[RMDB]
RNA sequence: GGGAACGACUCGAGUAGAGUCGAAAAGAAAGUCCGAACCGGCGGUUACAGUACGCGACCCGGUCGCCUCCAGCGACCGGUUGACCAGGUGAAAUUCCUGGACCGACGGUUAAAGUCCGGAUGGGAGAAAACAAUGGCUUGUUCGCAAGCCAUUGAAUCGUAAUAAUGAGUUCGCUCAUUAUUACGAAAAAGAAACAACAACAACAAC
Reactivity to 2A3 in 0.01 (KOAc 150mM, MgCl2 10mM, bicine 150mM(pH8.5), 24C), signal-to-noise 2, nucleotides 027 to 156: g060a030a050a000g050u030c050c020g020a040a020c010c000g020g010c000g010g000u010u030a020c000a020g010u020a000c000g010c010g010a000c000c030c000g000g000u010c000g010c000c010u060c000c010a030g010c000g000a000c010c010g040g000u010u050g000a000c000c000a000g000g010u000g000a000a000a000u000u000c000c000u000g000g000a000c000c000g000a000c010g000g000u040u150a040a010a010g010u020c020c030g080g070a060u170g170g080g000a050g010a030a090a010a010c020a010a020u000g000g000c000u000u020g010u090u070c130g030c130a000a000g000c000c000a000u010u000g000a000a040
Reactivity to DMS in 0.01 (KOAc 150mM, MgCl2 10mM, bicine 150mM(pH8.5), 24C), signal-to-noise 2, nucleotides 027 to 156: g000a090a070a150g030u000c010c020g010a030a050c020c010g000g020c010g010g000u000u030a130c140a100g000u000a040c080g010c020g020a300c280c030c010g010g000u000c000g050c010c040u000c120c110a300g010c000g030a030c000c000g050g020u000u000g010a070c030c010a020g040g000u000g010a060a300a300u010u000c000c010u000g010g020a030c000c000g010a050c050g010g020u000u000a060a080a300g000u010c030c020g030g000a050u000g040g020g000a200g010a190a050a090a170c020a010a000u010g010g020c000u000u020g020u000u000c250g010c030a000a010g020c000c000a010u000u000g000a030a110

Structure probing data (2A3 and DMS) for a 207-nucleotide construct. The reactions ran in a buffer of 150 mM KOAc, 10 mM MgCl2 and 150 mM bicine (pH 8.5), at 24 C.